Conditions: 150 mM KOAc, 10 mM MgCl2 and 150 mM bicine (pH 8.5), 24 C.
An RNA of 177 nucleotides, treated with 2A3 and DMS and read out base by base.
For DMS, 2,144 sequencing reads were counted.
The 2A3 profile rests on 1,734 reads.
Values cover nucleotides 27 to 126.

RNA sequence: GGGAACGACUCGAGUAGAGUCGAAAAGAGAAAAAGAAAAGGACCACUCCUGCGGGAGUUAAGGCACUACGGACAGCCGGGUCCAAUGCCGAAAAAGAAAAAGAAAAAGAAAAAGAAAAAGAAAGAAGAUACCGUAUAUUUUCGAAUAUACGGUAUCAAAAGAAACAACAACAACAAC
Reactivity to 2A3 in 0.01 (KOAc 150mM, MgCl2 10mM, bicine 150mM(pH8.5), 24C), signal-to-noise 2, nucleotides 027 to 126: g100a000g050a000a120a020a000a000g090a020a130a050a030g020g000a000c010c000a020c020u000c020c000u030g000c210g080g000g010a000g010u070u070a000a050g000g020c000a020c120u150a030c130g020g070a030c020a010g010c000c000g000g010g010u010c000c010a000a040u030g010c000c010g130a040a020a010a010a050g090a000a040a040a000a020g050a010a100a000a010a000g100a030a010a020a030a000g040a060a050a000a040a010g080a020a080a040g070a070a010
Reactivity to DMS in 0.01 (KOAc 150mM, MgCl2 10mM, bicine 150mM(pH8.5), 24C), signal-to-noise 2, nucleotides 027 to 126: g010a270g040a070a060a110a120a070g010a050a040a090a090g000g040a010c010c010a180c030u000c020c000u010g060c210g060g000g000a020g030u000u020a030a030g000g000c000a030c100u010a070c070g000g000a040c070a110g010c000c000g020g000g000u000c000c000a060a050u040g020c010c030g000a070a070a040a040a090g030a060a060a050a020a110g000a020a050a060a060a090g020a020a010a060a040a030g010a070a020a040a060a030g000a040a100a090g000a100a120